[RMDB]
RNA sequence: GGGAACGACUCGAGUAGAGUCGAAAAGAUAUGGACGAUGUAGAGCUUGAUGACCGUAUAGAACCCUCUUGCUCGGAAACGAGCAAGAGGUCCCUAUACGCAAGAGCGAUUGCAUCGUCCUAAGUCAGACAUUUUUUAUCUUCGGAUAAAAAAUGUCAAAAGAAACAACAACAACAAC
Reactivity to 2A3 in 0.01 (KOAc 150mM, MgCl2 10mM, bicine 150mM(pH8.5), 24C), signal-to-noise 1, nucleotides 027 to 126: g000a020u000a020u050g000g010a000c000g000a000u000g030u140a040g050a100g240c000u280u020g030a300u060g000a300c000c000g030u000a020u020a010g130a150a220c000c000c000u040c010u030u000g000c000u000c000g000g030a000a000a000c000g020a040g060c000a030a000g010a020g010g000u010c000c000c000u030a000u000a020c020g050c020a300a300g000a000g020c030g080a120u000u300g010c000a010u010c000g000u000c000c010u000a000a000g000u000c040a010
Reactivity to DMS in 0.01 (KOAc 150mM, MgCl2 10mM, bicine 150mM(pH8.5), 24C), signal-to-noise 1, nucleotides 027 to 126: g030a020u020a110u000g000g000a000c000g000a010u020g010u010a030g010a300g010c000u000u000g000a120u020g000a070c300c000g030u000a000u000a010g000a120a200c180c000c010u000c000u000u000g000c000u010c010g020g000a010a010a080c000g000a000g020c000a020a000g000a000g010g000u000c100c120c010u000a000u000a010c010g010c010a030a040g000a000g020c010g010a270u000u000g000c030a010u010c000g030u000c000c000u000a000a020g000u000c030a220
Structure probing data (2A3 and DMS) for a 177-nucleotide construct. For DMS, 1,289 sequencing reads were counted. DMS (dimethyl sulfate) methylates the pairing face of unpaired adenines and cytosines. The reactions ran in a buffer of 150 mM KOAc, 10 mM MgCl2 and 150 mM bicine (pH 8.5), at 24 C. Source: RMDB library TTRINS, as collected in RNAgym.